[RMDB]
RNA sequence: GGGAACGACUCGAGUAGAGUCGAAAAGAUAUGGAACGAACUACAGGUGAAGUUGGCGUUGAAAUCGGAAACGAUGGAGCCAAUGGAGGCCUGCGUUCCUAAGUCAAAAGGUAGCUUCGGCUACCAAUCAAACUACUGUGUUCGCACAGUAGUUUGAAAAAGAAACAACAACAACAAC
Reactivity to DMS in 0.01 (KOAc 150mM, MgCl2 10mM, bicine 150mM(pH8.5), 24C), signal-to-noise 3, nucleotides 027 to 126: g000a040u000a300u010g010g010a000a010c000g010a080a050c080u020a300c030a000g000g010u010g000a300a180g010u000u000g010g030c000g010u000u000g010a080a110a030u000c010g000g000a100a070a120c000g010a010u010g010g010a090g020c000c000a000a000u000g010g000a300g000g000c000c010u000g010c020g000u000u010c000c000u000a050a090g010u010c070a080a040a090a120g000g010u000a010g020c000u000u000c220g000g020c000u000a000c000c000a040a040
Reactivity to 2A3 in 0.01 (KOAc 150mM, MgCl2 10mM, bicine 150mM(pH8.5), 24C), signal-to-noise 3, nucleotides 027 to 126: g060a030u040a050u160g000g000a000a000c010g010a040a040c080u140a050c300a010g030g000u080g060a020a030g010u010u010g020g000c040g200u300u030g020a040a020a000u000c000g020g040a040a050a020c010g000a000u010g000g020a000g000c000c000a010a000u020g000g040a050g160g250c000c010u000g000c000g000u000u000c000c000u020a090a000g060u030c040a050a040a040a110g000g010u010a000g000c000u080u070c300g090g020c000u000a000c000c000a000a020